The data come from the RNA Mapping Database (RMDB), library OK1LIB.
This 177-nucleotide RNA was probed chemically with 2A3 and DMS.
High DMS reactivity at an A or C suggests that its Watson-Crick edge is free.
For 2A3, 70,523 sequencing reads were counted.
For DMS, 76,072 sequencing reads were counted.
Conditions: 150 mM KOAc, 10 mM MgCl2 and 150 mM bicine (pH 8.5), 24 C.
[RMDB]
RNA sequence: GGGAACGACUCGAGUAGAGUCGAAAACGUCGUGAACUAGCGACAAUGCAUUAGGUCCAUCGUUAUCUAACCGAAACAUCGUGACUAGUGAUAGAAUAGAACCAGGAGAGGACGCUGGCAAACAAAGAGCGAGUGUAUUAUUCGUAGUACGCUCGCUAAAAGAAACAACAACAACAAC
Reactivity to 2A3 in 0.01 (KOAc 150mM, MgCl2 10mM, bicine 150mM(pH8.5), 24C), signal-to-noise 9, nucleotides 027 to 126: c050g010u010c010g020u040g090a130a090c080u030a080g010c000g020a010c010a030a050u140g020c030a030u040u090a040g040g050u010c020c010a050u030c090g040u040u060a110u090c050u050a040a090c040c020g040a050a030a030c030a050u080c050g060u070g060a050c020u030a020g030u010g070a040u050a090g080a080a070u090a060g050a040a020c020c020a020g010g040a100g020a030g040g020a010c020g000c040u010g010g000c020a050a060a020c040a040a120a020g130
Reactivity to DMS in 0.01 (KOAc 150mM, MgCl2 10mM, bicine 150mM(pH8.5), 24C), signal-to-noise 9, nucleotides 027 to 126: c140g010u010c020g010u010g010a130a100c120u020a090g010c040g000a050c040a090a070u040g000c080a060u010u010a080g000g000u010c030c040a070u020c080g010u010u000a070u020c050u010a100a090c090c050g000a110a070a080c090a050u010c070g010u010g000a100c030u010a030g010u020g010a080u020a060g010a090a080u020a070g010a080a090c060c050a090g000g010a080g010a080g000g010a040c050g010c040u000g000g010c080a060a060a070c150a050a080a090g000